Chemical mapping of a 207-nucleotide RNA with DMS and 2A3.
For DMS, 1,931 sequencing reads were counted.
Reactivities are given for positions 27 through 156.
For DMS the reverse transcriptase was MarathonRT.
[RMDB]
RNA sequence: GGGAACGACUCGAGUAGAGUCGAAAAGGCGAUAGAGAGGCCCUCUCAUUAAUGCGGAGAUGUCACGCUGACAGAAUGAUAUUAGAUGUCCGCUUCCGGUUGCAUCGCGGCGAUGAUUACAUAGGACAUCGAUUACCCAUUGGCUUCGGGGAAGCAACCAGUACGAGUGAUUCGUCACUCGUACUGGAAAAGAAACAACAACAACAAC
Reactivity to DMS in 0.01 (KOAc 150mM, MgCl2 10mM, bicine 150mM(pH8.5), 24C), signal-to-noise 1, nucleotides 027 to 156: g020g000c000g080a150u000a100g050a180g000a070g110g010c000c030c030u000c050u000c050a130u000u020a060a170u000g000c020g040g000a110g030a080u000g010u000c020a040c020g010c060u010g020a160c110a070g000a130a060u020g000a070u000a040u010u010a110g010a080u020g020u000c000c010g030c090u020u010c070c010g000g000u000u000g000c030a070u000c120g000c040g020g010c070g030a130u000g010a190u030u000a060c130a160u000a170g060g000a060c030a010u000c040g010a120u010u020a070c000c050c040a180u010u010g020g010c030u070u000c040g000g020g040g000a040a010g010c030a080a180
Reactivity to 2A3 in 0.01 (KOAc 150mM, MgCl2 10mM, bicine 150mM(pH8.5), 24C), signal-to-noise 2, nucleotides 027 to 156: g030g000c010g000a050u120a100g150a000g010a090g030g020c010c000c000u040c000u000c000a050u120u190a170a040u130g020c030g040g000a050g000a030u060g020u070c070a000c080g060c120u100g010a020c010a050g150a220a050u050g010a030u050a070u250u130a030g000a030u030g000u000c000c010g000c000u020u020c010c000g040g030u050u070g020c030a040u070c080g000c040g090g000c060g030a030u030g010a020u010u120a110c140a080u100a130g030g000a000c000a000u000c010g000a000u010u070a070c060c010c000a010u030u130g050g010c020u080u010c070g050g000g010g040a010a000g000c000a000a030